The record gives the reactivity of an RNA of 177 nucleotides to DMS and 2A3. The reactions ran in a buffer of 150 mM KOAc, 10 mM MgCl2 and 150 mM bicine (pH 8.5), at 24 C. Reactivities are given for positions 27 through 126. The data come from the RNA Mapping Database (RMDB), library OK2TST. DMS adducts were read by reverse transcription with MarathonRT.
[RMDB]
RNA sequence: GGGAACGACUCGAGUAGAGUCGAAAAAGGACUGCAAACCUCUUCACGCGGAAGGUGGGCCUAGGCUUCAUGGGUCUUGCCUCGGCUCUCGCGAGGCUAGGCAUACCCUACGAUAGCGACGAGGGCGAAUCGUAACGUUUUUCGAAACGUUACGAUUAAAAGAAACAACAACAACAAC
Reactivity to DMS in 0.01 (KOAc 150mM, MgCl2 10mM, bicine 150mM(pH8.5), 24C), signal-to-noise 8, nucleotides 027 to 126: a060g010g010a100c050u000g020c110a090a110a150c020c010u000c020u000u000c040a060c080g010c060g000g010a110a150g010g010u000g020g010g000c020c020u000a060g020g000c020u000u010c030a100u010g000g010g010u000c080u010u000g010c050c020u000c130g020g010c020u000c010u010c230g010c160g000a060g000g000c010u000a010g010g010c030a050u000a040c010c000c010u000a220c060g020a070u020a050g020c030g000a060c050g000a060g000g000g000c100g010
Reactivity to 2A3 in 0.01 (KOAc 150mM, MgCl2 10mM, bicine 150mM(pH8.5), 24C), signal-to-noise 4, nucleotides 027 to 126: a000g090g020a060c070u100g030c080a060a100a210c000c020u000c000u040u030c020a040c080g060c030g030g020a060a040g020g020u020g020g010g000c000c010u050a060g040g090c000u040u030c010a040u100g030g000g000u040c000u070u080g050c010c020u040c040g030g000c000u000c000u050c100g090c090g010a010g020g060c000u000a000g000g000c000a020u040a030c000c000c000u010a040c050g110a120u140a090g010c020g030a030c040g000a060g020g030g000c030g070